[RMDB]
RNA sequence: GGGAACGACUCGAGUAGAGUCGAAAACUGACCAGCUGAUAUGCCCGGAGAUGCGUGUACCGUUUUAACAUGUUCAGGGAGCGGUGGCCUGAAAUAGCGGCAACUUCAAUGACAUUCAAUGUACCAACUGAGUAGUACCGUUCGCGGUACUACUCAGAAAAGAAACAACAACAACAAC
Reactivity to DMS in 0.01 (KOAc 150mM, MgCl2 10mM, bicine 150mM(pH8.5), 24C), signal-to-noise 2, nucleotides 027 to 126: c000u000g000a100c010c040a080g000c080u020g000a110u010a090u010g020c030c010c040g020g000a120g010a070u000g020c070g000u000g030u000a090c050c060g000u000u000u000u000a080a120c170a070u000g000u000u000c000a080g000g020g040a120g000c080g010g000u000g010g030c020c010u010g010a080a100a120u010a080g020c000g040g010c020a040a030c060u000u000c020a080a060u000g000a040c050a020u000u000c090a060a070u000g000u010a120c060c080a020a220
Reactivity to 2A3 in 0.01 (KOAc 150mM, MgCl2 10mM, bicine 150mM(pH8.5), 24C), signal-to-noise 1, nucleotides 027 to 126: c040u030g020a050c010c030a020g080c070u070g110a080u040a000u210g040c000c000c000g030g000a090g000a010u070g050c020g020u040g020u000a030c030c050g010u200u000u050u000a130a030c030a060u110g010u060u100c010a000g050g020g000a110g000c000g140g000u030g000g020c010c000u010g010a060a070a080u130a040g040c010g000g040c020a030a020c030u100u050c070a050a140u090g000a030c000a060u080u050c060a110a200u170g020u080a060c010c000a080a100